[RMDB]
RNA sequence: GGGAACGACUCGAGUAGAGUCGAAAAGGCCGUGCCGGUCGACGCACCGCCGAAGCCUGACUGGCUGAGCGCCGAGGCUGCGGCCGAGUGGGAUCGCGUAGUUGCGGACCUGCUGACGCUCGGCUGGGAGUAGGACCUUGUUCGCAAGGUCCUACUCAAAAGAAACAACAACAACAAC
Reactivity to DMS in 0.01 (KOAc 150mM, MgCl2 10mM, bicine 150mM(pH8.5), 24C), signal-to-noise 3, nucleotides 027 to 126: g000g000c010c110g010u020g010c080c050g030g040u010c080g030a100c150g000c040a150c070c190g020c020c010g000a110a090g020c010c010u000g000a240c080u000g010g030c000u000g000a130g010c050g030c030c000g000a090g020g020c000u000g020c080g010g010c020c010g000a010g030u000g000g010g000a030u000c000g020c000g000u000a220g000u000u030g000c000g000g000a050c010c000u010g020c010u000g010a080c070g000c020u000c010g000g010c010u000g000g000
Reactivity to 2A3 in 0.01 (KOAc 150mM, MgCl2 10mM, bicine 150mM(pH8.5), 24C), signal-to-noise 2, nucleotides 027 to 126: g010g010c010c010g020u050g000c010c030g120g120u180c070g010a070c050g000c000a000c000c040g000c000c020g020a030a000g050c010c000u080g110a170c050u080g000g000c010u030g020a030g020c020g000c020c010g000a050g020g000c030u040g020c080g110g000c010c020g010a060g000u020g000g040g000a080u010c010g000c030g050u170a130g090u150u280g070c030g010g000a040c000c010u020g000c050u060g030a040c050g020c010u000c000g010g010c020u020g010g060